[RMDB]
RNA sequence: GGGAACGACUCGAGUAGAGUCGAAAAUGGUUCGGAUACGGACAUGAUAAACAUUUAUCACUGGGCGUGUCCCCCUAAACCGCCGGGGCCACUCUAUAGCACGCGCUCCCCGCUGGGGCGAUGGGGCGCAUCGGUCGGUGUUCGCGCCGAUCGAUGUAAAAGAAACAACAACAACAAC
Reactivity to 2A3 in 0.01 (KOAc 150mM, MgCl2 10mM, bicine 150mM(pH8.5), 24C), signal-to-noise 9, nucleotides 027 to 126: u110g030g000u070u100c030g000g000a010u010a020c000g010g050a000c010a010u010g000a010u010a020a080a040c130a140u060u050u020a010u010c010a020c140u040g020g130g150c030g000u010g010u020c000c000c000c000c000u050a110a090a060c020c020g010c010c010g010g000g010g010c010c000a040c010u040c010u040a090u060a050g020c020a010c030g020c000g000c010u020c000c000c000c010g030c040u100g000g000g030g000c000g030a050u040g010g010g010g000c010
Reactivity to DMS in 0.01 (KOAc 150mM, MgCl2 10mM, bicine 150mM(pH8.5), 24C), signal-to-noise 9, nucleotides 027 to 126: u020g000g000u010u020c250g010g000a030u000a020c020g010g010a030c020a030u010g000a020u000a010a040a220c280a140u040u010u000a010u000c010a020c210u000g000g000g010c010g000u000g000u000c000c010c080c020c010u010a030a110a110c060c030g010c040c030g000g010g010g000c030c020a060c050u000c040u010a080u020a080g010c070a060c090g000c020g010c030u000c010c010c060c060g010c050u010g010g010g010g000c030g000a060u010g010g010g000g020c060